The record gives the reactivity of an RNA of 207 nucleotides to 2A3. Source: RMDB library M2RFPK, as collected in RNAgym. 2A3 adducts were read by reverse transcription with SuperScript II with manganese. The 2A3 profile rests on 986 reads. 2A3 is a SHAPE reagent: it acylates the 2'-hydroxyl of flexible nucleotides of all four kinds. The RNA was probed in 150 mM KOAc, 10 mM MgCl2 and 150 mM bicine (pH 8.5) at 24 C.

[RMDB]
RNA sequence: GGGAACGACUCGAGUAGAGUCGAAAAGAAAUUACGUUUCCUUUACACUUCUCAAACCGGGAUCAAGAGAAGCAAAGCAUGCCUCAUAUCCACGAUGGAGGGUGUCGUGGAGUAUACUGUACCAAAAAGAGCGAACACGGCUUCGGCCGUGUUCGAACUGUACGGAGCAGUUCGCUGCUCCGUACAGAAAAGAAACAACAACAACAAC
Reactivity to 2A3 in 0.01 (KOAc 150mM, MgCl2 10mM, bicine 150mM(pH8.5), 24C), signal-to-noise 2, nucleotides 027 to 156: g040a030a050a010u170u090a020c080g020u010u030u000c010c000u040u050u080a030c050a010c020u180u180c000u020c020a100a150a210c100c050g070g010g000a110u140c120a180a020g010a000g000a170a000g000c020a010a090a010g030c030a030u070g020c000c000u090c000a060u040a050u130c000c000a010c090g020a020u050g100g000a040g090g000g000u030g000u000c000g010u030g000g000a030g010u000a010u010a010c030u080g050u100a070c010c060a000a000a000a120a110g100a020g100c000g000a000a000c000a010c000g010g050c000u060u040c170g080g000c000c000g000u000g000u020u000c000g000a000a000